RNA sequence: GGGAACGACUCGAGUAGAGUCGAAAAAUUUGAAGCGUUGUAACGCGCGUCCUGUUGAAAGGACCGAUCCAUAUUACAAGAAGGACAUAAAUAUCUCUACUUCAACAGAUGCUUCAGAAUCUUCCUACCGUAGGUAGCGCUUCGGCGCUACCUACGGAAAAGAAACAACAACAACAAC
Reactivity to 2A3 in 0.01 (KOAc 150mM, MgCl2 10mM, bicine 150mM(pH8.5), 24C), signal-to-noise 1, nucleotides 027 to 126: a000u130u110u020g000a020a010g000c010g040u030u050g020u140a100a000c060g000c010g020c030g050u000c010c030u050g120u070u130g100a300a070a010g000g000a000c010c010g040a000u020c060c010a050u040a130u230u060a010c040a130a020g080a100a030g070g010a010c060a110u300a050a160a020u160a090u040c180u000c000u080a060c000u020u020c000a010a040c010a120g130a050u060g020c010u000u000c010a030g060a050a040u060c060u010u000c010c000u050a130
Source: RMDB library OK2TST, as collected in RNAgym. Chemical mapping of a 177-nucleotide RNA with 2A3. Conditions: 150 mM KOAc, 10 mM MgCl2 and 150 mM bicine (pH 8.5), 24 C. Reactivities are rounded to 0.1 and cut off at 0 and 3. 2A3 is a SHAPE reagent: it acylates the 2'-hydroxyl of flexible nucleotides of all four kinds.